[RMDB]
RNA sequence: GGGAACGACUCGAGUAGAGUCGAAAAAAAACAGAGAUUUCGUGGAAGGUGUUAAUGGAGUUGAGUGGAUUGAUGUCGUGAUGGAAGGUGGAAGCUGUGUGACCAUUACAGCAAAGGACAAGCCCAAACUCGUAAUUAUAUUCGUAUAAUUACGAGUAAAAGAAACAACAACAACAAC
Reactivity to DMS in 0.01 (KOAc 150mM, MgCl2 10mM, bicine 150mM(pH8.5), 24C), signal-to-noise 9, nucleotides 027 to 126: a050a040a060a060c100a070g010a120g000a100u000u000u000c070g020u000g010g010a070a050g000g010u000g000u010u000a060a060u000g010g000a060g010u000u000g010a090g020u000g010g000a090u010u000g010a070u000g010u000c070g010u000g010a100u000g000g010a060a050g000g020u000g010g010a070a080g010c040u000g010u000g010u000g010a100c120c070a080u000u000a040c070a030g000c050a050a060a070g010g010a050c100a050a100g010c010c010c040a060a090
Reactivity to 2A3 in 0.01 (KOAc 150mM, MgCl2 10mM, bicine 150mM(pH8.5), 24C), signal-to-noise 5, nucleotides 027 to 126: a000a010a020a010c110a010g070a010g020a100u130u200u160c050g020u090g050g030a040a040g020g010u040g030u150u140a090a080u120g040g000a040g040u060u070g060a040g020u060g020g040a060u010u100g020a030u060g030u060c050g010u040g040a040u050g020g050a050a040g020g000u020g010g020a050a020g020c040u040g020u010g020u040g100a030c020c010a040u050u080a020c020a010g020c000a070a030a020g030g010a030c020a050a010g010c010c000c000a040a080